[RMDB]
RNA sequence: GGGAACGACUCGAGUAGAGUCGAAAACGGGAGCGGCAGCGCUCAGCGGCAGAUCGGCAACCGCGCCGUCCAGCGAGGGAAGCAUCUGGCUAGUGGCCAGUCCUUCCGGCGUAAUAAUUUGCGGUUCACACCAACAAUUCUUCGGAAUUGUUGGUGUAAAAGAAACAACAACAACAAC
Reactivity to DMS in 0.01 (KOAc 150mM, MgCl2 10mM, bicine 150mM(pH8.5), 24C), signal-to-noise 1, nucleotides 027 to 126: c050g000g000g010a010g020c020g020g010c300a090g000c000g040c020u010c030a090g030c050g020g000c090a100g000a040u010c040g000g010c040a120a100c020c020g010c040g010c020c000g000u000c050c050a150g000c020g010a030g010g000g010a070a020g000c070a040u010c000u000g000g010c000u000a160g050u010g010g000c000c000a010g020u000c300c000u000u000c020c000g010g030c030g000u000a070a070u010a020a050u000u000u000g000c030g000g010u000u000c130
Reactivity to 2A3 in 0.01 (KOAc 150mM, MgCl2 10mM, bicine 150mM(pH8.5), 24C), signal-to-noise 1, nucleotides 027 to 126: c000g000g060g010a030g030c000g060g000c080a010g180c070g000c020u010c010a030g060c030g050g050c070a030g010a120u110c030g000g000c040a000a020c000c000g000c000g000c020c000g010u010c020c020a040g020c000g030a060g100g010g020a000a040g010c050a050u050c000u000g000g000c000u040a080g220u110g300g040c010c010a000g000u020c000c000u010u040c020c000g140g000c000g010u040a040a090u160a110a140u140u110u170g000c010g000g000u080u070c020